[RMDB]
Chemical mapping of a 177-nucleotide RNA with 2A3 and DMS. It was measured as part of the RMDB library M2PK50. For DMS the reverse transcriptase was MarathonRT.

RNA sequence: GGGAACGACUCGAGUAGAGUCGAAAAUGUUUGCAAUUCGUUGCAAACAAACUACCGAGAACGUUGCACGGUAUAAACAGCGAACCCUUGGAAACAAGGGAACUAUGGAACGCUUCGGCGUUCCAAAUGUCUUAUUCGAUUUCGAUCGAAUAAGACAAAAAGAAACAACAACAACAAC
Reactivity to 2A3 in 0.01 (KOAc 150mM, MgCl2 10mM, bicine 150mM(pH8.5), 24C), signal-to-noise 1, nucleotides 027 to 126: u060g020u000u000u000g000c010a010a000u030u030c190g030u060u010g000c000a000a000a000c000a060a000a000c030u000a010c010c010g010a000g020a120a070c020g090u040u100g140c250a100c150g090g000u190a050u110a290a130a060c050a020g020c020g040a060a110c000c000c000u020u020g020g020a030a050a030c000a000a000g020g020g020a000a000c000u000a040u040g000g010a010a020c040g040c030u050u070c230g120g030c000g000u000u000c000c010a010a000a000
Reactivity to DMS in 0.01 (KOAc 150mM, MgCl2 10mM, bicine 150mM(pH8.5), 24C), signal-to-noise 2, nucleotides 027 to 126: u000g010u010u000u010g000c020a010a020u000u010c180g040u000u000g000c000a010a010a000c000a030a110a110c050u000a010c000c000g000a080g010a090a040c050g020u000u000g000c070a110c110g000g010u010a030u010a060a070a080c170a060g000c110g000a110a130c010c000c000u000u000g000g010a140a080a210c000a000a000g000g010g000a010a030c070u000a120u000g010g000a000a010c010g000c010u000u020c220g010g000c000g010u000u000c010c000a010a000a080

Background
The RNA was probed in 150 mM KOAc, 10 mM MgCl2 and 150 mM bicine (pH 8.5) at 24 C.